An RNA of 177 nucleotides, treated with DMS and read out base by base. It was measured as part of the RMDB library RFMREP. The reactions ran in a buffer of 150 mM KOAc, 10 mM MgCl2 and 150 mM bicine (pH 8.5), at 24 C.
RNA sequence: GGGAACGACUCGAGUAGAGUCGAAAAGCGUGGACUGUUGUCGGCCGUGCCGGCGGCCUAAGCCCGGGGGCCCUAGGUGCCUCCGGUCGCCGUCGUCGGCACGGCCGGUCUCCGCGCGCCGCAAGGCGCAUAUGUUGUCGUUCGCGACAACAUAUGCAAAAGAAACAACAACAACAAC
Reactivity to DMS in 0.01 (KOAc 150mM, MgCl2 10mM, bicine 150mM(pH8.5), 24C), signal-to-noise 6, nucleotides 027 to 126: g020c020g030u000g010g010a050c300u020g010u010u000g010u000c020g000g000c000c010g020u000g000c010c010g020g010c010g000g000c000c060u010a100a280g010c100c000c010g010g000g000g010g010c000c000c210u020a120g030g040u010g020c010c000u000c000c000g010g010u000c030g000c190c300g000u000c020g030u000c010g010g020c000a010c010g000g000c000c000g000g000u000c050u000c020c010g010c010g020c010g020c010c010g000c270a080a080g000g020c080